The record gives the reactivity of an RNA of 207 nucleotides to 2A3. For 2A3 the reverse transcriptase was SuperScript II with manganese. Conditions: 150 mM KOAc, 10 mM MgCl2 and 150 mM bicine (pH 8.5), 24 C. Source: RMDB library OK3TST, as collected in RNAgym. The 2A3 profile rests on 632 reads.
RNA sequence: GGGAACGACUCGAGUAGAGUCGAAAACUACUAUCUUGGACAAUGCAGAUAAUAGAACAUUGCUAUCAUCAUAGAAACUUGUCUUGGACAGUGCUGUUCUGGAGAAUGGUACUACUUCACACAGAGUGGAUUCAGUUUGUAUGAGGAUCUGAGAAGGGAAACAAGCAGCAUUCGUGCUGCUUGUUUCAAAAGAAACAACAACAACAAC
Reactivity to 2A3 in 0.01 (KOAc 150mM, MgCl2 10mM, bicine 150mM(pH8.5), 24C), signal-to-noise 2, nucleotides 027 to 156: c000u020a010c010u070a160u100c010u060u130g000g000a000c010a140a000u090g000c040a000g100a190u090a300a120u170a290g170a100a040c090a170u110u070g070c000u030a020u140c000a000u000c020a020u020a050g090a030a050a020c010u050u030g010u000c010u020u090g030g040a040c000a040g000u000g030c000u060g000u020u040c010u060g100g030a230g000a180a030u020g000g020u000a020c000u000a000c020u040u110c050a060c000a010c020a040g150a040g140u060g010g000a040u050u010c010a040g040u000u020u170g170u080a090u000g000a030g040g030a050u030c030u020g010a000g020a010a010g020g130